[RMDB]
RNA sequence: GGGAACGACUCGAGUAGAGUCGAAAACUCAGGUUGACCUUUCUGUACAUCCGUCCGAUUUAUAGUAUGCGACGUAGUUCUAUAGACUAGAGGUCCAACGAGCACGCCACGUAGUCGUAGUCCAUGAAGACGUAGUCGUGGCCAUAGUCGUAUAUGCGUGUGGUAAUCAGUUCGCUGAUUACCACACAAAAGAAACAACAACAACAAC
Reactivity to DMS in 0.01 (KOAc 150mM, MgCl2 10mM, bicine 150mM(pH8.5), 24C), signal-to-noise 1, nucleotides 027 to 156: c000u000c080a120g000g030u000u000g020a100c040c050u000u000u000c020u000g050u000a010c050a080u010c070c000g040u010c050c060g030a180u010u010u000a180u000a130g010u000a030u000g030c110g020a040c000g020u000a190g010u000u000c080u020a100u000a100g030a050c180u010a100g000a190g080g000u010c060c030a040a120c050g000a060g000c000a120c060g020c000c000a010c020g000u000a180g010u000c110g050u000a080g050u000c060c100a100u000g050a140a080g000a060c020g020u000a100g030u000c030g020u010g020g050c020c070a010u000a080g020u000c000g000u010a150u000a090u000g000c190
Reactivity to 2A3 in 0.01 (KOAc 150mM, MgCl2 10mM, bicine 150mM(pH8.5), 24C), signal-to-noise 2, nucleotides 027 to 156: c040u040c040a010g150g000u050u020g030a050c000c000u010u120u050c000u030g020u080a040c020a090u150c070c040g100u000c010c000g010a000u060u170u010a110u070a090g090u060a020u150g070c050g000a000c030g040u040a020g010u000u040c000u000a100u070a190g040a060c010u010a040g040a000g180g070u050c170c030a000a000c000g010a010g040c060a030c190g030c000c000a020c020g000u040a030g060u060c040g020u000a030g070u030c210c050a120u150g120a100a100g040a050c030g000u010a020g050u000c040g000u010g000g040c000c000a040u080a140g050u060c010g020u070a030u000a020u190g110c030
The record gives the reactivity of an RNA of 207 nucleotides to DMS and 2A3. The DMS profile rests on 1,944 reads. Reactivities are rounded to 0.1 and cut off at 0 and 3. For 2A3, 710 sequencing reads were counted. For 2A3 the reverse transcriptase was SuperScript II with manganese. For DMS the reverse transcriptase was MarathonRT.